Structure probing data (DMS and 2A3) for a 207-nucleotide construct.

[RMDB]
RNA sequence: GGGAACGACUCGAGUAGAGUCGAAAAUAUUUCAAACAGAGGGGAUUGAAUCAGGAAAUUGUUUCCAAAACUGUUGGAAAGGCUGGAGGAGCAGAAAGGGACAGGUGAUGUCACCCAGAGAUUGGUCACUGCAGGAAGCCUUCAUGUCCCUUAGGGACGAGCAUUAAAUAUUCGUAUUUAAUGCUCGAAAAGAAACAACAACAACAAC
Reactivity to DMS in 0.01 (KOAc 150mM, MgCl2 10mM, bicine 150mM(pH8.5), 24C), signal-to-noise 2, nucleotides 027 to 156: u010a040u000u000u000c040a030a060a030c050a090g000a100g030g030g020g000a150u010u000g030a070a090u010c120a120g020g010a030a100a100u000u000g020u010u000u000c010c010a040a080a070a100c060u000g020u000u000g010g000a070a080a040g030g030c070u000g020g010a130g030g010a120g020c050a030g010a080a040a050g020g000g000a040c030a020g020g020u000g000a080u010g000u000c030a080c050c020c030a120g000a140g010a160u000u000g030g000u000c030a080c050u000g000c060a090g000g010a100a060g020c030c020u000u000c030a050u000g020u010c020c000c020u000u010a060g020g000g030a140
Reactivity to 2A3 in 0.01 (KOAc 150mM, MgCl2 10mM, bicine 150mM(pH8.5), 24C), signal-to-noise 2, nucleotides 027 to 156: u090a020u020u180u050c010a050a080a000c070a040g030a060g040g020g020g000a020u090u090g080a040a100u140c040a050g010g060a110a040a030u100u130g020u070u090u010c020c000a050a030a030a050c060u100g060u150u060g010g030a090a030a010g020g010c020u020g050g020a040g000g010a010g040c020a030g080a000a030a020g030g000g010a010c020a050g040g030u070g050a100u110g040u070c030a070c020c000c000a010g030a010g000a110u100u080g030g000u050c040a020c050u050g010c000a000g060g050a030a030g000c010c000u060u130c060a060u090g030u020c000c000c020u030u040a100g000g000g010a020

2A3 adducts were read by reverse transcription with SuperScript II with manganese. The data come from the RNA Mapping Database (RMDB), library OK3TST. For 2A3, 1,212 sequencing reads were counted. For DMS the reverse transcriptase was MarathonRT.